[RMDB]
RNA sequence: GGGAACGACUCGAGUAGAGUCGAAAAAUGAGGAGCAUUUCAAGGCCCUCUUUGUCAGCUUCCUGGAGGUGAGUGAGGCCACGGGUAUGUCUGACCCUGGCAGGGCAGCAGGGCACUGUGGCUGCCAGCCAUGAGAACUGGGUGCCUACUCCCUGCAUCGACUACUGGAUUUCGAUCCAGUAGUCGAAAAAGAAACAACAACAACAAC
Reactivity to 2A3 in 0.01 (KOAc 150mM, MgCl2 10mM, bicine 150mM(pH8.5), 24C), signal-to-noise 1, nucleotides 027 to 156: a020u160g010a000g000g010a300g010c070a130u270u300u300c180a230a050g080g000c000c060c030u010c000u090u020u040g000u000c000a000g010c030u020u010c010c000u130g060g030a250g110g000u040g010a060g060u150g050a070g200g000c000c010a000c000g030g000g000u200a060u020g080u000c030u010g010a010c000c000c000u030g030g030c000a000g000g010g020c070a000g000c150a170g080g000g030c030a020c030u170g050u020g110g020c000u050g220c020c030a010g000c000c010a010u040g150a010g090a250a040c200u190g080g020g040u000g000c000c000u040a050c000u020c070c000c000u000g000c000a010